[RMDB]
RNA sequence: GGGAACGACUCGAGUAGAGUCGAAAAAUACAGCGUAAUCGAGCGGAGGAAAACGGCACUCCGAAAAUCCGGUACGAUUAUGAUCCCACUGCGUCGACGCUAGAUGCAGAUCCGGAUUGCCGAGGAACGUGUUGACGCAUUUCGAUGCGUCAACACGAAAAGAAACAACAACAACAAC
Reactivity to DMS in 0.01 (KOAc 150mM, MgCl2 10mM, bicine 150mM(pH8.5), 24C), signal-to-noise 1, nucleotides 027 to 126: a150u010a040c270a080g000c010g020u000a030a070u010c020g000a180g000c030g000g000a060g000g000a040a110a090a140c030g000g030c070a050c140u010c010c000g010a050a020a110a080u000c010c000g010g000u000a120c100g020a030u000u010a010u000g000a080u000c030c060c000a170c030u030g020c010g080u000c020g000a070c170g040c170u000a140g000a030u000g000c000a010g000a090u020c030c020g010g000a040u010u000g000c050c050g030a160g000g030a040a110